[RMDB]
RNA sequence: GGGAACGACUCGAGUAGAGUCGAAAAGAGUACCGCCCGGCCGCCGCCGCCGCGCCGGACGCGUCGCCGCCGCGCGUGAUCGUGCCGCUCUCGGCGCGGCAUCCGGAGCGGUUGCGCGCCUACGCGAUCCGCGUAAAUGAUUCGUCAUUUACGCGGAAAAAGAAACAACAACAACAAC
Reactivity to 2A3 in 0.01 (KOAc 150mM, MgCl2 10mM, bicine 150mM(pH8.5), 24C), signal-to-noise 1, nucleotides 027 to 126: g100a040g050u030a020c040c000g050c000c000c020g050g010c020c030g000c010c060g040c030c040g010c000c010g010c020g030c030c020g000g030a020c000g000c020g060u040c030g010c060c020g130c050c030g130c020g000c000g040u050g120a210u190c030g020u070g070c030c020g030c010u020c020u050c020g030g000c000g020c000g000g010c000a000u020c000c000g010g000a090g030c010g000g000u010u040g010c020g000c030g000c070c010u050a050c020g030c000g050a090
Reactivity to DMS in 0.01 (KOAc 150mM, MgCl2 10mM, bicine 150mM(pH8.5), 24C), signal-to-noise 4, nucleotides 027 to 126: g000a140g020u000a080c080c020g010c010c060c090g000g010c090c050g030c020c050g010c090c050g000c040c020g000c110g000c300c010g010g010a030c050g010c060g010u000c080g020c040c040g000c100c140g020c090g020c080g020u000g000a070u010c070g020u000g010c020c040g010c080u000c090u020c020g030g010c020g030c020g010g010c010a040u000c010c020g000g010a070g010c010g010g000u000u010g020c020g010c030g010c020c020u000a070c100g000c020g000a160